Overview: The record gives the reactivity of an RNA of 177 nucleotides to 2A3 and DMS. For DMS, 1,655 sequencing reads were counted. The data come from the RNA Mapping Database (RMDB), library TTRDES. The reactions ran in a buffer of 150 mM KOAc, 10 mM MgCl2 and 150 mM bicine (pH 8.5), at 24 C.
RNA sequence: GGGAACGACUCGAGUAGAGUCGAAAAGAUAUGGACGAGUGAGUGGAAUGAGCGAUAGUCGGAAACGACUAUCCGCUCGAGAGACUCCUCGUCCUAAGUCAAAGCAUUCAGCUUCGGCUGAAUGCAAUCGAUGAUGUCUGUUCGCAGACAUCAUCGAAAAAGAAACAACAACAACAAC
Reactivity to 2A3 in 0.01 (KOAc 150mM, MgCl2 10mM, bicine 150mM(pH8.5), 24C), signal-to-noise 2, nucleotides 027 to 126: g000a000u000a000u030g000g000a000c000g020a000g100u300g060a050g030u070g070g270a300a300u300g020a100g030c000g000a020u010a010g000u000c010g000g000a010a000a010c010g000a000c000u000a000u080c030c040g000c020u000c010g070a060g000a010g030a000c010u040c030c000u000c010g010u000c010c010u000a000a000g000u000c000a060a050a050g000c000a000u030u000c000a010g000c070u080u190c300g200g000c020u010g010a000a010u020g000c000a010a040
Reactivity to DMS in 0.01 (KOAc 150mM, MgCl2 10mM, bicine 150mM(pH8.5), 24C), signal-to-noise 1, nucleotides 027 to 126: g000a030u000a070u020g000g000a010c000g010a030g020u020g010a010g010u000g010g000a170a170u040g000a030g000c000g020a030u000a000g010u000c020g000g010a020a000a030c000g000a000c000u000a000u000c100c120g000c000u010c000g000a140g000a300g000a080c000u000c000c000u000c000g000u020c000c000u010a000a100g000u020c010a140a050a170g000c000a010u000u000c000a010g000c010u000u030c240g060g010c000u000g000a020a000u020g010c010a030a030